[RMDB]
RNA sequence: GGGAACGACUCGAGUAGAGUCGAAAAGACUACCUUGAAAAGUCGUACAACUGCCGAAACAAUCUUUUUCGUUACUAUUAUAAUUAAAAUGGUCGAUGGCGGUUUGUCUCUGGAAAUCAGAGAGAAAGUGCAUUCGUAAGUUCGCUUACGAAUGCACAAAAGAAACAACAACAACAAC
Reactivity to 2A3 in 0.01 (KOAc 150mM, MgCl2 10mM, bicine 150mM(pH8.5), 24C), signal-to-noise 3, nucleotides 027 to 126: g000a000c010u060a060c050c040u000u000g050a110a010a030a020g010u010c000g080u040a080c000a020a000c010u020g000c020c000g090a150a040a050c090a050a100u070c020u010u060u010u030u020c090g000u120u040a000c040u040a090u300u080a150u100a140a080u080u170a130a000a000a000u040g010g010u040c030g010a040u130g000g000c000g000g010u010u020u070g060u000c000u000c000u000g010g050a150a160a110u290c010a000g000a000g020a000g030a040a060a000
Reactivity to DMS in 0.01 (KOAc 150mM, MgCl2 10mM, bicine 150mM(pH8.5), 24C), signal-to-noise 1, nucleotides 027 to 126: g000a000c060u000a050c010c020u000u000g000a170a140a120a040g030u000c000g000u040a280c040a120a030c030u050g020c000c030g030a140a130a030c090a120a000u020c030u000u030u040u040u030c000g000u000u030a050c120u050a130u050u010a090u020a040a050u000u000a010a000a000a040u000g000g010u000c000g000a120u030g000g000c020g030g020u040u020u000g020u060c010u000c000u020g010g010a150a070a120u040c000a000g040a010g000a020g000a010a000a090